[RMDB]
RNA sequence: GGGAACGACUCGAGUAGAGUCGAAAAAAGGACCCCUUCAGCGAACGGAAGACUCUCUCACUCGAAGGAGUAAGACCAUAGCGAUGGGGGGAGAUGCUAGGAGUUAGAGGAGACCGAAGCGAGGAAACAUAUGUGACACGUUCGCGUGUCACAUAUGAAAAGAAACAACAACAACAAC
Reactivity to DMS in 0.01 (KOAc 150mM, MgCl2 10mM, bicine 150mM(pH8.5), 24C), signal-to-noise 1, nucleotides 027 to 126: a050a050g000g030a170c010c020c000c060u000u000c080a120g010c020g000a060a110c140g000g010a190a100g000a080c070u000c040u000c050u000c040a200c080u000c090g000a060a060g010g000a040g000u000a050a040g000a140c070c000a030u010a180g010c010g000a070u010g030g000g000g070g010g020a050g000a050u000g000c060u000a070g010g010a050g000u000u020a060g000a080g040g000a080g000a080c020c040g000a040a050g000c090g000a050g000g010a100a020a120
Reactivity to 2A3 in 0.01 (KOAc 150mM, MgCl2 10mM, bicine 150mM(pH8.5), 24C), signal-to-noise 1, nucleotides 027 to 126: a000a000g120g000a100c040c000c000c000u060u090c030a000g000c010g030a030a030c040g050g040a050a010g100a060c000u030c010u030c000u000c030a050c070u150c070g080a040a040g040g010a010g000u000a060a000g030a020c000c020a060u050a030g060c010g030a060u080g000g000g000g000g010g030a070g000a020u100g010c030u050a020g040g030a080g040u050u040a030g020a020g050g000a010g020a010c020c030g030a010a030g010c030g020a030g020g060a070a150a000
Annotation
The record gives the reactivity of an RNA of 177 nucleotides to DMS and 2A3. Conditions: 150 mM KOAc, 10 mM MgCl2 and 150 mM bicine (pH 8.5), 24 C. For 2A3, 1,437 sequencing reads were counted.